[RMDB]
RNA sequence: GGGAACGACUCGAGUAGAGUCGAAAAAUCCAGAGACUAUGGGCAGAGGUGGCCUUUGAAAGGUAGAUGGAGGGCCAGGCACAGUGGCUCACACUUGUAACCCUAGCACUUUGGGAGGCCAAGGUAGCGAACCUCACAUAUUCGUAUGUGAGGUUCGAAAAGAAACAACAACAACAAC
Reactivity to DMS in 0.01 (KOAc 150mM, MgCl2 10mM, bicine 150mM(pH8.5), 24C), signal-to-noise 2, nucleotides 027 to 126: a070u000c010c000a010g020a080g010a170c060u000a080u010g020g010g000c090a090g010a100g010g040u010g010g000c030c000u000u000u010g000a040a080a080g000g010u010a090g020a090u000g000g020a120g010g010g010c020c010a060g010g000c180a080c190a080g000u000g000g010c030u010c060a100c040a020c040u000u000g010u000a130a180c040c020c010u000a040g010c090a070c010u020u000u020g010g010g000a080g010g010c040c010a070a010g010g000u000a080g010
Reactivity to 2A3 in 0.01 (KOAc 150mM, MgCl2 10mM, bicine 150mM(pH8.5), 24C), signal-to-noise 1, nucleotides 027 to 126: a000u000c010c010a000g000a010g010a060c040u030a110u170g000g000g010c050a040g010a010g040g050u030g060g000c070c000u020u030u060g300a250a090a020g040g040u110a040g030a280u090g020g100a060g090g000g020c100c070a020g060g000c080a050c030a260g030u010g000g020c010u040c040a030c000a010c020u040u060g050u250a110a120c000c010c030u000a040g000c080a040c020u100u050u010g070g000g000a080g040g090c010c000a070a030g070g030u070a010g070

Conditions: 150 mM KOAc, 10 mM MgCl2 and 150 mM bicine (pH 8.5), 24 C. The record gives the reactivity of an RNA of 177 nucleotides to DMS and 2A3. 2A3 adducts were read by reverse transcription with SuperScript II with manganese. The DMS profile rests on 1,639 reads. For 2A3, 914 sequencing reads were counted. The data come from the RNA Mapping Database (RMDB), library OK2TRN.